[RMDB]
RNA sequence: GGGAACGACUCGAGUAGAGUCGAAAAACAAUAAUCCUGUAGAUGAUCCUUCGCUUGAUUUUUGCCCAGGAACAGUAACGGCCUGCCGCCUGCGGUUCGGCGCAAACAAUGAAUUGGAUUUUGGCGGUUGCGCUGUCGCUUCACUACAGAGGAAAAAAAACAGUUUCUUGUUCGCAAGAAACUGUUUAAAAGAAACAACAACAACAAC
Reactivity to DMS in 0.01 (KOAc 150mM, MgCl2 10mM, bicine 150mM(pH8.5), 24C), signal-to-noise 1, nucleotides 027 to 156: a090c050a050a070u000a110a110u000c030c020u030g000u000a070g010a140u010g000a160u010c010c000u000u000c120g010c060u000u020g050a180u000u000u000u000u010g000c010c010c050a120g020g010a070a180c130a100g010u000a030a050c060g000g000c010c010u000g030c040c040g050c000c020u000g030c180g010g010u000u010c010g000g000c300g000c080a060a050a080c070a060a300u000g010a060a110u010u000g000g010a160u000u000u000u000g020g040c100g000g020u000u000g040c020g050c050u000g000u000c000g030c000u010u000c030a180c050u000a030c040a080g030a100g040g000a120a000a000a060a150
Reactivity to 2A3 in 0.01 (KOAc 150mM, MgCl2 10mM, bicine 150mM(pH8.5), 24C), signal-to-noise 2, nucleotides 027 to 156: a000c060a010a080u170a080a010u110c000c000u000g000u030a000g000a240u040g010a060u050c000c000u050u050c020g030c000u120u070g110a250u300u210u170u160u210g000c000c010c020a000g000g030a040a050c030a090g000u070a020a000c000g000g000c010c010u010g000c010c000g000c010c000u040g000c000g080g000u030u040c020g060g020c050g000c100a070a060a090c020a030a030u090g020a050a020u100u060g110g110a100u080u080u080u140g000g000c000g000g030u010u010g000c050g010c070u010g000u000c010g010c000u040u020c000a000c000u020a010c000a010g080a140g050g080a020a060a010a010a000

Chemical mapping of a 207-nucleotide RNA with DMS and 2A3. The reactions ran in a buffer of 150 mM KOAc, 10 mM MgCl2 and 150 mM bicine (pH 8.5), at 24 C. Values are in units of 0.01, from 0 to 300, in steps of 10. The DMS profile rests on 1,881 reads. It was measured as part of the RMDB library OK3TST. For DMS the reverse transcriptase was MarathonRT. Values cover nucleotides 27 to 156.